Structure probing data (2A3) for a 207-nucleotide construct.
The data come from the RNA Mapping Database (RMDB), library RNAMAK.
Conditions: 150 mM KOAc, 10 mM MgCl2 and 150 mM bicine (pH 8.5), 24 C.
For 2A3, 916 sequencing reads were counted.
RNA sequence: GGGAACGACUCGAGUAGAGUCGAAAAACCUUUGUGAUGGGCUAAUCCUACUUGUCAGAAAGUAGGCAUCCCAUUGGGAUGCCUAACUUUCUUGGAUUUAGUAGGACAACCCAUCACUCUGGUAAAAGGCGGAUAAAGGUUCGCCUUUAUCCGCCAACACAGAACCGUAGUUCGCUACGGUUCUGUGAAAAGAAACAACAACAACAAC
Reactivity to 2A3 in 0.01 (KOAc 150mM, MgCl2 10mM, bicine 150mM(pH8.5), 24C), signal-to-noise 1, nucleotides 027 to 156: a000c000c000u000u000u020g000u000g000a000u000g000g030g000c040u090a220a080u030c000c000u000a000c000u000u000g000u000c000a000g000a000a000a000g000u000a000g010g000c010a010u000c000c020c180a300u140u210g000g000g000a000u010g000c000c000u010a170a030c000u000u000u060c000u000u070g010g020a000u300u030u260a000g000u000a000g000g000a000c000a000a000c000c000c000a000u000c000a000c000u000c000u000g000g020u090a050a170a120a090g000g010c000g000g000a000u000a000a010a010g000g040u030u120c200g070c000c000u000u030u000a000u000c010c000g000c000c000a010a000